[RMDB]
RNA sequence: GGGAACGACUCGAGUAGAGUCGAAAAAAGGAAGUUGGCCCUUCAAGAAAAUAAUGUACUGUACUCAGCAGACUUUGAGCAUUACAUGUACCUGGUAAUAUGGAACCAACAUUGAAUCAGACAGCCCCCACUAGGAACGUUUCGACGUUCCUAGUGGAAAAGAAACAACAACAACAAC
Reactivity to DMS in 0.01 (KOAc 150mM, MgCl2 10mM, bicine 150mM(pH8.5), 24C), signal-to-noise 1, nucleotides 027 to 126: a070a060g000g010a060a050g000u000u000g000g010c060c060c050u000u000c070a050a080g000a040a030a090a080u000a090a010u000g000u000a040c080u010g000u000a070c070u000c040a010g020c080a100g000a150c120u000u000u000g010a060g050c210a080u000u000a000c040a010u000g020u000a040c060c030u000g000g040u040a050a060u000a040u000g000g000a120a160c070c050a030a070c070a030u010u010g000a180a110u040c120a010g010a100c100a110g010c010c010c030